[RMDB]
RNA sequence: GGGAACGACUCGAGUAGAGUCGAAAACGGACGGUUCGCCGCGGCGCACAUCGGCAAUCCCCGCGCGACCGUCGGGUGCUCAGGCACGCCCGGGCCAACCGAUGCGGGUGCGGCCGAUACCAUCAACUAAAUUAUUACCGUUCGCGGUAAUAAUUUAAAAAGAAACAACAACAACAAC
Reactivity to DMS in 0.01 (KOAc 150mM, MgCl2 10mM, bicine 150mM(pH8.5), 24C), signal-to-noise 6, nucleotides 027 to 126: c100g000g010a020c020g000g010u000u000c020g010c090c090g030c010g020g000c110g000c130a110c110a080u020c110g030g000c070a180a110u030c140c140c000c000g000c110g010c010g020a040c040c000g000u000c010g000g000g010u000g020c080u000c120a090g000g000c020a080c030g000c010c010c010g020g000g010c070c080a170a130c110c070g000a110u010g020c030g000g000g010u010g020c140g000g000c000c010g000a110u040a050c140c030a120u040c070a090a130c150
Reactivity to 2A3 in 0.01 (KOAc 150mM, MgCl2 10mM, bicine 150mM(pH8.5), 24C), signal-to-noise 9, nucleotides 027 to 126: c040g030g040a010c010g010g030u160u180c040g040c100c040g000c050g020g020c040g030c020a060c020a170u090c050g070g000c030a030a170u190c020c010c000c010g000c000g000c010g010a020c030c010g000u010c010g010g020g000u060g000c060u090c200a170g000g070c040a020c070g030c000c020c000g020g010g010c040c030a080a080c050c030g060a070u090g050c020g010g030g020u030g020c070g050g000c010c020g010a030u080a070c020c020a060u120c030a040a040c040